RNA sequence: GGGAACGACUCGAGUAGAGUCGAAAACCAGAUGACGGUCCUGCCAUGAGACCGCAACGAGAGCAUGUCGCAUCGAAUGGAUUCGGGGAGUCGGCAGCUUGCCCCACGGAUGAGCGCCUAAUGCCGGAAGAGACGUGCAACUUCGGUUGCACGUCAAGGUAUAAUCCACGUUCGCGUGGAUUAUACCAAAAGAAACAACAACAACAAC
Reactivity to 2A3 in 0.01 (KOAc 150mM, MgCl2 10mM, bicine 150mM(pH8.5), 24C), signal-to-noise 3, nucleotides 027 to 156: c010c000a020g060a110u140g030a060c020g010g000u020c000c030u060g070c050c080a100u100g040a030g000a120c000c000g000c040a000a030c050g070a020g000a000g140c040a060u090g040u110c010g030c060a060u040c040g050a050a040u090g070g040a030u140u130c100g000g000g030g010a040g060u090c010g030g000c040a040g000c020u110u120g060c000c000c000c020a070c050g010g030a060u120g020a000g000c050g020c030c020u050a120a010u080g030c030c040g030g010a070a050g050a030g000a060c000g000u000g000c010a000a000c000u080u030c140g150g000u010u000g000c000a000c000g000u000c000a000a030
Reactivity to DMS in 0.01 (KOAc 150mM, MgCl2 10mM, bicine 150mM(pH8.5), 24C), signal-to-noise 1, nucleotides 027 to 156: c030c030a210g010a150u020g040a110c000g000g010u000c030c030u000g090c040c150a120u000g020a120g020a030c040c010g080c080a050a050c070g060a110g020a080g000c010a080u000g030u010c030g040c010a170u000c030g010a170a090u000g000g010a090u010u000c000g000g000g000g000a150g000u020c030g000g070c030a040g000c030u000u010g010c000c000c010c010a100c020g010g010a040u010g010a130g000c030g000c060c000u000a050a110u010g020c000c080g000g030a160a060g000a190g000a030c000g000u000g050c020a010a000c000u000u010c300g030g060u000u010g000c000a020c000g040u000c030a000a030